[RMDB]
RNA sequence: GGGAACGACUCGAGUAGAGUCGAAAAGAUAUGGAUGUGUGCUUUCCGAUAAGCUGAGGUUCGGAAACGAACCCAGCUUUUGACGGAAUCACACAUCCUAAGUCAAAUCGUGGGUUCGCCCACGAAACCUCACAAUCCAGUUCGCUGGAUUGUGAGGAAAAGAAACAACAACAACAAC
Reactivity to 2A3 in 0.01 (KOAc 150mM, MgCl2 10mM, bicine 150mM(pH8.5), 24C), signal-to-noise 2, nucleotides 027 to 126: g010a020u020a030u170g000g010a010u000g020u000g030u010g070c170u070u020u050c020c100g130a120u060a300a000g000c000u020g090a140g190g000u020u020c000g040g000a080a040a020c000g010a000a000c020c000c000a000g000c040u020u010u010u000g070a070c090g030g010a010a010u020c000a010c010a000c000a020u000c000c010u010a010a020g000u010c030a010a000a190u040c000g010u020g050g010g020u110u100c300g180c010c000c010a020c000g000a060a000a010
Reactivity to DMS in 0.01 (KOAc 150mM, MgCl2 10mM, bicine 150mM(pH8.5), 24C), signal-to-noise 1, nucleotides 027 to 126: g010a020u000a300u010g010g000a000u010g000u000g000u000g010c270u010u000u010c000c000g030a170u020a000a020g020c000u010g010a090g020g020u000u000c040g010g010a030a140a110c030g020a010a020c000c000c000a000g040c010u000u000u020u000g000a250c300g000g000a000a000u000c020a010c000a000c000a020u020c000c000u000a000a090g000u000c010a100a090a070u010c000g030u000g010g010g050u000u010c280g060c010c000c020a010c000g000a010a050a090
Notes:
Source: RMDB library TTRDES, as collected in RNAgym. Structure probing data (2A3 and DMS) for a 177-nucleotide construct. The reactions ran in a buffer of 150 mM KOAc, 10 mM MgCl2 and 150 mM bicine (pH 8.5), at 24 C.